The data come from the RNA Mapping Database (RMDB), library TTRDEL. Structure probing data (2A3 and DMS) for a 177-nucleotide construct. The reactions ran in a buffer of 150 mM KOAc, 10 mM MgCl2 and 150 mM bicine (pH 8.5), at 24 C. For 2A3 the reverse transcriptase was SuperScript II with manganese. DMS adducts were read by reverse transcription with MarathonRT.

RNA sequence: GGGAACGACUCGAGUAGAGUCGAAAAGAUAUGGAUCCUAAGGCUCUUGGAUUUAUAAUAUAUCGGAAACGAUAUAUCGAUUGUCAGAGCUAUGGAUCCUAAGUCAAAAGUGUCGUUCGCGACACAAUCCUUGUAGUAUCUUCGGAUACUACAAGGAAAAAGAAACAACAACAACAAC
Reactivity to 2A3 in 0.01 (KOAc 150mM, MgCl2 10mM, bicine 150mM(pH8.5), 24C), signal-to-noise 3, nucleotides 027 to 126: g040a010u070a050u150g000g000a000u010c010c000u050a160a130g110g000c000u000c030u200u300g130g010a040u130u300u110a090u040a040a020u000a020u000a000u000c000g030g000a080a040a040c010g000a000u000a000u010a010u020c040g120a070u000u100g070u150c040a020g000a010g000c010u020a020u050g000g000a000u000c000c000u000a050a030g020u010c040a030a010a070a140g000u000g000u000c010g010u060u130c300g000c000g100a000c000a000c000a010a060
Reactivity to DMS in 0.01 (KOAc 150mM, MgCl2 10mM, bicine 150mM(pH8.5), 24C), signal-to-noise 4, nucleotides 027 to 126: g010a060u000a300u000g010g010a000u000c000c000u000a090a200g000g000c000u000c010u010u010g020g010a020u010u000u000a020u000a110a020u000a000u000a000u000c000g000g000a150a080a180c000g010a020u000a000u000a000u000c080g000a080u000u000g000u000c020a020g000a000g000c010u000a300u000g000g000a000u000c000c000u010a000a080g020u000c030a070a080a070a140g010u000g010u000c000g010u010u010c260g010c010g010a010c010a010c020a030a100